Chemical mapping of a 177-nucleotide RNA with 2A3 and DMS. For 2A3, 1,287 sequencing reads were counted. For DMS the reverse transcriptase was MarathonRT.
[RMDB]
RNA sequence: GGGAACGACUCGAGUAGAGUCGAAAAGGUCGUCUUUUCGAAGACGACCACUGUCGUUCCCAAAACUUUUCGAAACAUGUGGAAAGACAUGCUGAAACAGAAUUGGUGUGUGUUUCGACACACACAAAUACAGGUCAUUCUUCGGAAUGACCUGUAUAAAAGAAACAACAACAACAAC
Reactivity to 2A3 in 0.01 (KOAc 150mM, MgCl2 10mM, bicine 150mM(pH8.5), 24C), signal-to-noise 2, nucleotides 027 to 126: g020g000u000c000g000u020c000u000u100u000u090c220g080a000a030g000a000c000g000a000c000c000a010c000u030g000u000c000g000u000u020c000c000c010a000a000a000a000c020u040u040u060u060c030g070a050a110a020c000a010u010g000u070g240g300a180a070a080g050a040c000a000u010g000c070u050g070a040a040a040c120a080g190a170a110u170u210g170g000u000g000u010g000u010g000u000u070u070c190g120a010c000a000c000a000c020a020c010a020a040
Reactivity to DMS in 0.01 (KOAc 150mM, MgCl2 10mM, bicine 150mM(pH8.5), 24C), signal-to-noise 1, nucleotides 027 to 126: g020g020u000c010g020u010c000u010u000u010u010c140g010a010a010g010a010c000g000a000c000c000a020c130u000g000u010c000g020u000u000c000c000c000a060a030a080a170c050u010u000u000u010c000g030a160a100a110c010a020u000g000u000g000g020a120a090a130g010a040c000a000u000g000c030u000g010a080a060a020c160a020g010a120a040u010u000g030g020u000g000u000g000u000g000u000u000u000c150g000a010c000a000c000a000c000a000c010a060a090
For DMS, 1,179 sequencing reads were counted.